[RMDB]
This 177-nucleotide RNA was probed chemically with DMS and 2A3.
The RNA was probed in 150 mM KOAc, 10 mM MgCl2 and 150 mM bicine (pH 8.5) at 24 C.
It was measured as part of the RMDB library OK2TST.
RNA sequence: GGGAACGACUCGAGUAGAGUCGAAAAGAAUGAAACUUUUGGUUACCCUUACACCGUGACCGAAAACAAAGUGAAGCGUAAAAAGUGGUUAUUCAAAAUGUUAGUGAUCAGGCAUGCAGUAGUCGAACUCGACGAUAAUAUUCGUAUUAUCGUCGAGAAAAGAAACAACAACAACAAC
Reactivity to DMS in 0.01 (KOAc 150mM, MgCl2 10mM, bicine 150mM(pH8.5), 24C), signal-to-noise 5, nucleotides 027 to 126: g020a110a060u000g000a150a100a060c050u010u000u000u000g010g020u000u000a060c020c030c020u010u000a110c170a130c240c180g000u000g010a070c060c030g020a070a050a070a100c130a050a090a100g010u010g010a070a110g010c100g010u010a040a050a070a070a080g010u000g010g010u000u010a040u010u000c090a050a060a050a050u000g010u000u000a060g020u000g010a070u010c060a090g010g020c050a040u000g010c040a050g010u000a050g000u010c020g010a060a150
Reactivity to 2A3 in 0.01 (KOAc 150mM, MgCl2 10mM, bicine 150mM(pH8.5), 24C), signal-to-noise 2, nucleotides 027 to 126: g070a040a090u120g040a070a020a040c030u030u020u060u040g020g030u050u070a060c020c000c000u020u050a070c050a020c060c050g020u050g030a040c040c000g010a070a060a030a050c050a060a060a020g060u100g070a070a020g040c040g040u080a010a100a000a090a020g060u090g050g020u030u050a050u050u070c040a030a030a020a070u130g020u070u070a090g020u020g070a050u070c040a010g040g030c010a010u050g000c010a030g020u130a010g020u050c020g030a050a020